The data come from the RNA Mapping Database (RMDB), library OK1LIB. Chemical mapping of a 177-nucleotide RNA with DMS and 2A3. Reactivities are given for positions 27 through 126. DMS adducts were read by reverse transcription with MarathonRT. 2A3 is a SHAPE reagent: it acylates the 2'-hydroxyl of flexible nucleotides of all four kinds. For DMS, 5,956 sequencing reads were counted. 2A3 adducts were read by reverse transcription with SuperScript II with manganese. The RNA was probed in 150 mM KOAc, 10 mM MgCl2 and 150 mM bicine (pH 8.5) at 24 C.
[RMDB]
RNA sequence: GGGAACGACUCGAGUAGAGUCGAAAAGACGGAAAAGAUCGAACCUAAGAAGAUCAGGUAGUGUGAGCCGAAUCCUAGGGCUCCUAGAGACGCAUCGUCCGAUGCGAAAUAAACACUAACGUCGAAACCUGAUCGGUAUAUUCGUAUACCGAUCAGGAAAAGAAACAACAACAACAAC
Reactivity to DMS in 0.01 (KOAc 150mM, MgCl2 10mM, bicine 150mM(pH8.5), 24C), signal-to-noise 4, nucleotides 027 to 126: g010a010c000g010g010a110a060a130a110g010a010u010c000g020a090a170c190c160u040a140a130g000a110a170g010a000u010c020a060g020g010u000a000g020u010g000u010g010a000g010c020c000g000a090a070u020c040c030u000a120g010g000g010c000u000c000c190u040a050g010a140g000a220c030g000c000a010u000c000g000u050c190c200g000a020u000g000c000g000a030a030a120u010a100a120a030c000a000c000u010a050a130c000g020u000c000g000a090a080a110
Reactivity to 2A3 in 0.01 (KOAc 150mM, MgCl2 10mM, bicine 150mM(pH8.5), 24C), signal-to-noise 5, nucleotides 027 to 126: g020a000c030g050g030a050a090a020a090g040a020u040c030g010a100a160c020c020u070a140a070g130a040a010g000a070u010c030a020g020g120u030a000g010u010g050u080g020a010g000c010c000g060a120a100u110c030c010u060a060g020g090g000c000u000c000c000u040a060g010a000g010a060c010g000c010a010u010c020g250u160c150c200g000a000u000g010c000g010a040a040a050u090a000a060a000c040a010c020u040a130a030c020g000u000c020g010a050a040a020